[RMDB]
Chemical mapping of a 177-nucleotide RNA with 2A3 and DMS.
The DMS profile rests on 2,650 reads.
For 2A3, 1,433 sequencing reads were counted.
DMS adducts were read by reverse transcription with MarathonRT.
Conditions: 150 mM KOAc, 10 mM MgCl2 and 150 mM bicine (pH 8.5), 24 C.
RNA sequence: GGGAACGACUCGAGUAGAGUCGAAAAGGUCGAUCGCAUCGCGGAGGGCGUGUCGGGCGUCCGCGAGGCCGCGUGCUACGAGAUUCCUGACGAAGAGUUCGGCGCGCUGGUGGGCCUGGCCGUGGUCCUAAGCUGUGGGGUUCGCCCCACAGCUUAGAAAAGAAACAACAACAACAAC
Reactivity to 2A3 in 0.01 (KOAc 150mM, MgCl2 10mM, bicine 150mM(pH8.5), 24C), signal-to-noise 3, nucleotides 027 to 126: g070g050u040c020g040a180u030c030g000c090a040u070c030g000c020g050g040a100g030g070g000c090g000u110g100u200c060g020g000g000c030g030u000c020c010g020c040g020a030g000g050c030c020g050c000g050u090g010c030u070a090c030g010a000g010a250u110u070c020c030u090g060a080c100g130a090a060g050a010g110u050u080c060g020g000c000g000c000g000c120u120g020g020u040g050g020g000c000c050u050g030g000c010c000g020u110g010g020u060c010
Reactivity to DMS in 0.01 (KOAc 150mM, MgCl2 10mM, bicine 150mM(pH8.5), 24C), signal-to-noise 2, nucleotides 027 to 126: g020g000u000c040g000a110u030c080g010c050a050u030c010g050c050g050g000a220g000g030g020c040g000u040g000u010c080g050g000g000c000g050u030c000c010g000c070g010a150g020g000c000c070g000c050g020u040g000c000u040a100c070g050a070g010a150u000u000c000c060u060g000a080c150g010a050a080g000a070g000u000u000c020g010g000c010g000c010g020c000u050g010g020u030g000g000g010c040c010u010g000g020c010c050g000u020g000g020u010c010
Values are in units of 0.01, from 0 to 300, in steps of 10.